[RMDB]
RNA sequence: GGGAACGACUCGAGUAGAGUCGAAAAAUACCUUCGGGUAUACUUAAUCCUAAGUCGUAGCGCUAGAGGCUUUAGACAUGGCUUUCGGAAACGAAAGCCAACAGCUAAAGCUACCCACCUAGUGCUACGAUAUGGAGUGCAGCUGUUUCGACAGCAACUAUAUUCAUUUAUUCGUAAAUGAAUAUAGAAAAGAAACAACAACAACAAC
Reactivity to DMS in 0.01 (KOAc 150mM, MgCl2 10mM, bicine 150mM(pH8.5), 24C), signal-to-noise 2, nucleotides 027 to 156: a070u010a020c000c010u010u010c300g040g010g020u000a000u000a020c080u020u000a100a100u000c010c000u010a110a210g040u000c000g000u010a000g000c030g000c000u000a000g010a120g050g000c010u000u000u010a020g010a060c040a300u000g000g000c000u000u000u000c000g020g000a160a120a220c010g010a010a000a000g010c000c000a000a010c050a120g010c000u000a010a020a030g020c010u000a030c010c010c050a300c120c000u010a010g020u000g000c000u000a000c000g000a000u000a060u000g020g000a140g020u010g000c030a160g030c000u000g010u000u000u010c060g030a120c040a050g030c020a070a120
Reactivity to 2A3 in 0.01 (KOAc 150mM, MgCl2 10mM, bicine 150mM(pH8.5), 24C), signal-to-noise 4, nucleotides 027 to 156: a000u020a010c010c000u020u080c290g130g000g020u010a040u030a070c030u120u190a100a120u040c000c000u030a140a030g020u000c000g010u000a000g000c000g000c010u010a010g000a020g010g020c010u020u010u010a020g030a110c030a100u020g000g010c000u000u000u000c010g040g030a060a090a090c010g000a000a000a010g010c010c010a010a010c030a010g000c000u000a000a000a010g000c010u020a030c050c030c010a060c010c000u000a010g020u000g000c000u000a000c000g000a000u000a000u010g000g010a050g030u180g090c120a080g000c020u030g020u070u140u250c200g100a040c000a010g010c000a020a010